[RMDB]
Chemical mapping of a 207-nucleotide RNA with 2A3 and DMS. For DMS, 11,331 sequencing reads were counted. For 2A3, 9,047 sequencing reads were counted. The reactions ran in a buffer of 150 mM KOAc, 10 mM MgCl2 and 150 mM bicine (pH 8.5), at 24 C. For DMS the reverse transcriptase was MarathonRT.
RNA sequence: GGGAACGACUCGAGUAGAGUCGAAAACUACCCUGUUCGCAGGGUAGAAAAAACCUUUGUGAUGGAGCCUUUUGACGGCAAUAGUAGUCCCAUUGGGACUACUGAUUGCCGAUAAGGCUUCAUCACUCUGGUAAAAAGUUGCGAUUCGUCGCAACAACAUUGAAUAAUGAUUCGUCAUUAUUCAAUGAAAAGAAACAACAACAACAAC
Reactivity to 2A3 in 0.01 (KOAc 150mM, MgCl2 10mM, bicine 150mM(pH8.5), 24C), signal-to-noise 2, nucleotides 027 to 156: c000u000a010c000c000c000u000g040u050u090c250g020c120a000g000g010g000u020a000g020a010a010a000a010a000a000c010c000u020u010u010g000u000g000a000u010g000g010a000g010c000c010u070u100u090u130g280a120c030g000g000c010a000a000u000a010g000u000a000g000u000c040c000c070a230u220u300g010g000g000a000c000u000a000c000u000g010a000u000u010g010c000c000g000a000u000a000a000g000g000c000u000u000c000a000u000c000a000c000u000c000u000g000g010u060a070a040a010a030a020g000u000u000g000c000g000a000u030u090c230g100u010c000g080c000a000a000c000a000a010
Reactivity to DMS in 0.01 (KOAc 150mM, MgCl2 10mM, bicine 150mM(pH8.5), 24C), signal-to-noise 3, nucleotides 027 to 156: c000u000a020c000c000c000u010g040u000u000c280g060c020a030g000g020g020u010a010g000a000a040a080a090a110a030c010c000u000u000u000g010u000g010a010u000g000g000a000g020c000c000u000u000u000u000g000a220c070g020g000c000a020a020u000a030g020u000a010g010u000c000c000c000a300u010u010g070g050g020a030c000u000a000c000u010g010a010u000u000g010c010c000g010a040u000a010a010g010g010c000u000u000c000a000u000c000a000c000u000c030u000g000g030u000a030a060a100a100a140g000u020u010g010c000g010a240u000u010c180g010u000c020g030c000a030a070c020a100a180